[RMDB]
RNA sequence: GGGAACGACUCGAGUAGAGUCGAAAAGAUAUGGACCUGUACAGCUAGCGAACAUUCGGAAACGAAUGCUCGCUUGGACCUGUACUGGGUCCUAAGUCAAAGUAGCCUCAGUUCGCUGAGGCUACAACCUCCAUCUUUAGUUCGCUAAAGAUGGAGGAAAAGAAACAACAACAACAAC
Reactivity to DMS in 0.01 (KOAc 150mM, MgCl2 10mM, bicine 150mM(pH8.5), 24C), signal-to-noise 4, nucleotides 027 to 126: g000a020u000a260u010g000g000a010c000c000u010g000u000a010c000a010g000c110u010a040g010c000g010a010a020c000a010u000u000c000g010g000a090a070a160c010g010a010a000u000g010c010u000c000g010c000u010u010g010g000a100c300c000u000g010u010a010c010u020g040g000g000u000c000c000u000a000a070g000u000c030a140a120a170g010u000a000g010c010c000u010c000a010g010u000u030c280g030c010u000g010a000g010g000c000u000a000c010a040a100
Reactivity to 2A3 in 0.01 (KOAc 150mM, MgCl2 10mM, bicine 150mM(pH8.5), 24C), signal-to-noise 3, nucleotides 027 to 126: g000a000u050a020u090g000g000a000c000c010u020g000u010a000c000a030g040c130u300a030g000c070g010a010a000c010a000u000u000c000g020g020a060a030a030c010g010a010a000u000g000c000u000c010g020c020u000u040g010g040a030c010c020u000g010u000a000c030u030g070g030g000u000c000c000u000a040a010g010u020c040a050a060a190g020u000a000g000c000c000u000c010a030g020u050u120c300g060c190u000g010a000g000g000c010u000a000c000a000a000